The data come from the RNA Mapping Database (RMDB), library OK3TST. Structure probing data (2A3 and DMS) for a 207-nucleotide construct. The reactions ran in a buffer of 150 mM KOAc, 10 mM MgCl2 and 150 mM bicine (pH 8.5), at 24 C. Reactivities are rounded to 0.1 and cut off at 0 and 3. For DMS, 6,048 sequencing reads were counted. For DMS the reverse transcriptase was MarathonRT. 2A3 adducts were read by reverse transcription with SuperScript II with manganese.
RNA sequence: GGGAACGACUCGAGUAGAGUCGAAAAUGCACACACCAGAGAAGAUUCCAAUUUAAUGUCCUCCCUUUAUUCAUAGAACAAUUCCUCAAGUCCACUCUGAGUAGAGGCUGCAUCACAAGGGGAUUGCCCCGUCUCCUUCCAGGGCUCUUAAUACAAAGAUUAUUAGUCGAUUCGUCGACUAAUAAUCAAAAGAAACAACAACAACAAC
Reactivity to 2A3 in 0.01 (KOAc 150mM, MgCl2 10mM, bicine 150mM(pH8.5), 24C), signal-to-noise 4, nucleotides 027 to 156: u090g000c010a010c000a000c010a020c050c050a020g020a010g010a120a030g030a080u100u080c060c040a090a080u060u150u240a220a110u210g060u070c020c020u050c040c010c000u050u070u060a100u090u070c050a040u040a100g040a060a030c010a040a070u100u070c010c010u040c050a060a020g040u010c030c010a040c020u040c030u030g020a010g030u040a030g030a000g010g000c020u030g000c010a030u040c030a040c030a060a020g020g000g000g020a000u010u100g030c010c000c000c000g010u000c010u000c000c000u040u030c020c010a000g000g010g000c000u020c020u100u150a050a050u170a120c040a020a030a190
Reactivity to DMS in 0.01 (KOAc 150mM, MgCl2 10mM, bicine 150mM(pH8.5), 24C), signal-to-noise 3, nucleotides 027 to 156: u010g000c040a060c060a090c070a100c040c030a070g010a120g000a120a110g020a160u000u000c040c020a080a120u000u000u000a080a130u020g010u000c030c030u010c030c010c010u000u000u000a040u020u000c040a110u010a050g010a080a120c060a060a160u010u010c010c030u000c030a080a120g030u000c000c030a080c040u000c030u010g000a090g030u010a070g010a050g000g030c030u000g010c040a070u010c020a060c040a040a060g020g020g020g000a060u000u000g000c020c010c020c020g000u000c000u000c010c010u000u000c050c020a060g020g020g000c020u000c040u010u000a040a120u000a130c080a060a100a190